[RMDB]
RNA sequence: GGGAACGACUCGAGUAGAGUCGAAAACCGCCGCUGUGCCUGAUGAUCUGUGUCGGCAACUACCUGUUGCUCGCGGCCGUCGUCCCGGUCCGCAUCGUGGCCGCGAUCCGCGAGGACGACUGGCGGAAGUGGAGGAUGGGUUCGCCCAUCCUCCACUAAAAGAAACAACAACAACAAC
Reactivity to DMS in 0.01 (KOAc 150mM, MgCl2 10mM, bicine 150mM(pH8.5), 24C), signal-to-noise 2, nucleotides 027 to 126: c010c000g010c030c020g030c030u020g010u000g020c000c060u000g010a050u010g000a070u010c070u030g000u010g010u000c020g000g010c010a060a030c060u000a130c200c090u010g010u010u000g010c060u000c010g010c020g000g010c120c020g000u000c050g010u000c010c050c060g000g020u000c100c100g000c160a050u000c060g030u000g040g020c030c010g010c050g010a050u000c120c030g020c150g010a150g000g010a030c020g010a060c050u010g010g000c020g000g040a110
Reactivity to 2A3 in 0.01 (KOAc 150mM, MgCl2 10mM, bicine 150mM(pH8.5), 24C), signal-to-noise 1, nucleotides 027 to 126: c000c010g000c010c010g020c040u030g020u090g030c020c080u070g040a100u130g030a070u070c050u180g120u020g070u150c030g000g010c000a040a000c040u120a110c000c110u100g020u030u070g080c000u030c040g050c000g000g000c050c030g110u050c010g010u000c050c020c040g010g050u050c030c010g030c060a100u070c090g120u100g070g000c010c020g000c000g020a020u000c010c000g040c020g040a020g000g030a010c040g010a010c040u070g000g020c000g000g030a070